RNA sequence: GGGAACGACUCGAGUAGAGUCGAAAAGAUAUGGACUGGAAAGCUGCCGAUGAAAGCUCUCGGAAACGAGAGCUGGAGGAACUACAGCGAUCCAGUCCUAAGUCAAACUACACGUUCGCGUGUAGAAGACGCAACAUAUGUUCGCAUAUGUUGCGUCAAAAGAAACAACAACAACAAC
Reactivity to 2A3 in 0.01 (KOAc 150mM, MgCl2 10mM, bicine 150mM(pH8.5), 24C), signal-to-noise 2, nucleotides 027 to 126: g010a000u030a060u080g000g030a000c010u000g020g000a000a040a020g000c020u030g040c010c070g300a300u050g010a020a000a000g000c010u000c000u000c010g010g030a070a040a040c000g000a000g000a000g050c000u000g000g000a000g000g010a030a020c050u300a080c200a010g010c000g010a030u000c000c000a010g000u000c000c010u010a010a000g000u010c000a000a010a070c000u020a000c010a000c000g050u110u090c300g000c020g140u020g000u000a000g020a020a040
Reactivity to DMS in 0.01 (KOAc 150mM, MgCl2 10mM, bicine 150mM(pH8.5), 24C), signal-to-noise 2, nucleotides 027 to 126: g010a060u020a300u000g020g020a020c000u020g010g000a020a050a300g000c000u000g020c000c020g020a120u020g000a250a090a040g000c010u000c000u000c010g000g000a090a040a150c000g000a020g020a000g000c010u000g000g000a080g030g000a060a040c110u000a190c010a010g000c000g000a260u000c000c000a000g000u000c000c000u000a000a070g010u000c020a070a100a180c010u010a010c000a000c000g000u000u010c240g040c000g030u000g010u000a010g000a080a120

Chemical mapping of a 177-nucleotide RNA with 2A3 and DMS. The DMS profile rests on 1,670 reads. The reactions ran in a buffer of 150 mM KOAc, 10 mM MgCl2 and 150 mM bicine (pH 8.5), at 24 C. For DMS the reverse transcriptase was MarathonRT.